[RMDB]
RNA sequence: GGGAACGACUCGAGUAGAGUCGAAAAGAUAUGGACCGUGAACUACGCUGUCGUGCAGCUCGGAAACGAGCUGAACUACAAAGUCAGCGCACGGUCCUAAGUCAAAACGAAGGGUUCGCCCUUCGAACACAAAUAAAAAGUUCGCUUUUUAUUUGUGAAAAGAAACAACAACAACAAC
Reactivity to DMS in 0.01 (KOAc 150mM, MgCl2 10mM, bicine 150mM(pH8.5), 24C), signal-to-noise 7, nucleotides 027 to 126: g000a020u000a180u010g000g000a020c000c000g010u000g000a100a050c120u020a290c020g000c050u000g020u010c100g020u000g010c000a010g010c000u000c000g000g000a040a030a080c000g010a010g010c000u000g000a010a010c010u000a100c200a060a120a140g010u010c060a000g000c180g000c000a010c000g000g010u000c000c000u000a000a060g000u000c020a070a060a070a160c030g000a010a000g010g010g010u000u010c260g010c000c000c000u000u000c000g010a080a210
Reactivity to 2A3 in 0.01 (KOAc 150mM, MgCl2 10mM, bicine 150mM(pH8.5), 24C), signal-to-noise 7, nucleotides 027 to 126: g010a000u020a020u060g000g010a010c000c010g000u000g020a090a080c100u160a050c290g010c010u050g170u300c050g010u030g010c010a000g000c000u000c000g010g010a030a010a010c000g000a000g000c010u000g010a000a000c010u110a040c070a070a170a070g180u190c020a000g000c010g000c010a000c000g010g000u000c010c000u000a000a000g000u000c000a000a000a040a050c020g000a000a010g060g010g020u070u160c260g180c020c000c010u000u000c000g000a040a000

Conditions: 150 mM KOAc, 10 mM MgCl2 and 150 mM bicine (pH 8.5), 24 C. An RNA of 177 nucleotides, treated with DMS and 2A3 and read out base by base. For DMS the reverse transcriptase was MarathonRT. Values cover nucleotides 27 to 126. High 2A3 reactivity points to a flexible backbone, as in loops and unpaired stretches.